An RNA of 177 nucleotides, treated with 2A3 and DMS and read out base by base. For 2A3 the reverse transcriptase was SuperScript II with manganese. DMS adducts were read by reverse transcription with MarathonRT.
[RMDB]
RNA sequence: GGGAACGACUCGAGUAGAGUCGAAAACGGUAAUACAGAGGCCACGAACAUUAUUCGGAAUCACUGGGCUUAAAGGGUGCGUAGGCGGGCCGCCAAGUGUUCUGUGAAAGCCCCGGGCUCAACCCGGAAACUAGGCUAUUUUCGAAUAGCCUAGUUUAAAAGAAACAACAACAACAAC
Reactivity to 2A3 in 0.01 (KOAc 150mM, MgCl2 10mM, bicine 150mM(pH8.5), 24C), signal-to-noise 8, nucleotides 027 to 126: c030g020g060u090a070a020u120a150c040a020g070a040g090g000c000c010a020c040g040a070a020c020a070u130u180a080u180u210c030g030g050a040a030u080c010a030c080u060g010g060g010c010u050u080a100a040a050g090g030g000u080g020c030g050u040a030g030g080c010g010g030g020c030c030g000c020c020a030a020g020u020g030u090u030c030u040g040u030g070a070a050a050g030c020c000c000c010g010g010g000c040u050c120a060a110c010c000c000g010g040
Reactivity to DMS in 0.01 (KOAc 150mM, MgCl2 10mM, bicine 150mM(pH8.5), 24C), signal-to-noise 9, nucleotides 027 to 126: c060g010g000u010a100a070u020a090c090a100g010a090g020g000c030c010a080c060g010a070a100c150a090u030u020a100u020u020c040g000g000a090a070u020c050a060c050u010g010g000g000c050u010u010a070a080a090g010g000g010u000g000c040g010u010a120g010g010c020g000g010g010c070c040g010c030c030a050a100g010u010g010u000u010c030u000g010u020g010a080a080a100g010c030c030c010c020g000g000g010c070u020c190a070a180c030c010c000g000g020